[RMDB]
RNA sequence: GGGAACGACUCGAGUAGAGUCGAAAAUGACAUGUUCGCAUGUCAAAAAAAGCGUACUACAUUGCUUGGACCUUCCGAACUACGCUGGGAUCCCAAAUAGGAUCCCAAGCGCGGAAGCUAGCAAUGUAUCGCAAAAACUCUUCCUUCGGGAAGAGAAGCAUAAGUACGGGUUCGCCCGUACUUAUGCAAAAGAAACAACAACAACAAC
Reactivity to 2A3 in 0.01 (KOAc 150mM, MgCl2 10mM, bicine 150mM(pH8.5), 24C), signal-to-noise 2, nucleotides 027 to 156: u080g000a010c010a070u060g060u160u110c180g030c090a000u050g030u050c030a080a000a000a000a000a000a250g050c040g050u110a040c030u000a000c020a000u000u000g000c010u050u110g050g090a140c040c000u000u010c000c000g010a060a060c090u080a030c270g000c000u000g000g000g000a010u020c000c020c030a040a130a160u190a100g000g000a000u030c000c010c040a010a020g000c000g000c010g000g020a000a000g000c000u000a000g000c000a000a000u000g000u000a000u000c000g000c000a000a020a000a120a090c010u000c000u030u000c000c010u000u020c170g130g010g000a000a000g000a000g010a010a000